[RMDB]
RNA sequence: GGGAACGACUCGAGUAGAGUCGAAAAUGGCUCUUGAGGAGCUACCGGACGCCCUUCAGACAAUAGUUUUGAUUGCACUAUUGAGUGUGAUGUCCUUAGGUGUGUUUUUUCUACUCAUGCAAAGGAAACGAGGUUGAAAAUUCGUUUUCAACCUCGUAAAAGAAACAACAACAACAAC
Reactivity to DMS in 0.01 (KOAc 150mM, MgCl2 10mM, bicine 150mM(pH8.5), 24C), signal-to-noise 2, nucleotides 027 to 126: u050g010g000c000u000c000u000u030g000a150g000g000a030g020c000u000a050c080c040g010g000a080c100g020c000c010c010u010u010c120a060g000a100c060a060a090u020a060g000u000u020u030u010g010a100u010u020g000c100a030c000u000a110u000u010g000a050g010u010g020u000g030a020u010g000u000c010c020u010u010a080g000g000u030g020u000g000u000u000u000u000u020u010c020u030a010c020u010c070a050u030g000c130a070a090a080g020g000a110a110
Reactivity to 2A3 in 0.01 (KOAc 150mM, MgCl2 10mM, bicine 150mM(pH8.5), 24C), signal-to-noise 3, nucleotides 027 to 126: u070g050g000c000u010c030u080u170g200a080g040g030a020g010c000u040a050c000c040g020g000a000c020g010c000c020c000u080u060c040a050g040a140c040a050a080u100a200g030u040u010u060u280g060a060u020u120g040c040a020c030u020a040u180u260g120a040g020u020g030u020g030a120u060g010u060c000c000u020u050a060g070g010u030g010u010g030u010u070u000u060u010u000c050u060a040c060u000c060a030u070g010c010a060a120a050g020g000a000a060
The record gives the reactivity of an RNA of 177 nucleotides to DMS and 2A3.
Conditions: 150 mM KOAc, 10 mM MgCl2 and 150 mM bicine (pH 8.5), 24 C.
Source: RMDB library OK1LIB, as collected in RNAgym.
DMS adducts were read by reverse transcription with MarathonRT.